RNA sequence: GGGAACGACUCGAGUAGAGUCGAAAAGAGCGAUUUAAUAUUAGAUCGUCGCGAUCUAAAUAGUCCGACACGCUGUCGCGGGGCAGCACCUCCCGGGAAAGGGCCCUUGGUACGGAUUCGAAAGAAAAUAUACCCAUAGCUUCGGCUAUGGGUAUAUAAAAGAAACAACAACAACAAC
Reactivity to DMS in 0.01 (KOAc 150mM, MgCl2 10mM, bicine 150mM(pH8.5), 24C), signal-to-noise 2, nucleotides 027 to 126: g010a100g010c020g020a070u010u010u000a030a170u020a170u000u000a000g010a020u000c010g040u020c200g020c080g000a010u000c010u000a030a020a130u000a050g000u010c040c040g000a140c180a110c100g010c040u000g000u000c050g000c150g000g030g000g020c050a040g010c040a120c090c010u000c020c000c040g020g000g010a050a040a120g010g000g010c020c040c020u000u010g010g000u010a060c100g020g000a090u000u000c090g010a080a100a150g010a080a040a090

Source information: An RNA of 177 nucleotides, treated with DMS and read out base by base. It was measured as part of the RMDB library OK2TRN. For DMS, 1,107 sequencing reads were counted. The reactions ran in a buffer of 150 mM KOAc, 10 mM MgCl2 and 150 mM bicine (pH 8.5), at 24 C.